[RMDB]
RNA sequence: GGGAACGACUCGAGUAGAGUCGAAAACGGUGCCGCCAUCGCGGGUGUGAUCGUCGACGGCGGCAACUUCGAUUGGACCCAGGGCCGCUUCCCCGGCUUCACCACCCCCGACCCCAGCUACCACGGCCAUAUGCUAGCGAUUCGUCGCUAGCAUAUGAAAAGAAACAACAACAACAAC
Reactivity to 2A3 in 0.01 (KOAc 150mM, MgCl2 10mM, bicine 150mM(pH8.5), 24C), signal-to-noise 1, nucleotides 027 to 126: c060g000g040u030g020c000c000g000c010c000a010u000c000g010c000g000g140g040u150g170u090g170a300u150c030g180u110c070g030a000c010g000g000c020g000g010c020a000a000c000u020u000c010g100a100u010u080g100g010a040c010c030c000a060g030g000g000c020c020g040c120u030u000c040c010c000c000g030g030c000u030u080c050a040c010c010a080c030c040c000c020c030g010a050c000c000c000c000a000g030c010u020a040c000c010a040c050g070g000c020
Reactivity to DMS in 0.01 (KOAc 150mM, MgCl2 10mM, bicine 150mM(pH8.5), 24C), signal-to-noise 4, nucleotides 027 to 126: c170g020g020u000g000c010c010g010c000c010a040u010c010g020c030g000g000g040u010g020u010g010a110u010c020g000u010c020g030a030c070g010g020c000g010g000c000a010a010c030u000u000c050g000a120u000u000g000g010a120c020c010c010a170g020g010g000c010c020g000c160u010u000c020c000c010c060g000g000c030u000u000c050a050c030c040a210c040c010c010c020c060g010a130c030c010c000c010a070g000c030u000a060c030c020a050c050g000g000c050

Structure probing data (2A3 and DMS) for a 177-nucleotide construct. It was measured as part of the RMDB library OK2TST. Values cover nucleotides 27 to 126. Conditions: 150 mM KOAc, 10 mM MgCl2 and 150 mM bicine (pH 8.5), 24 C.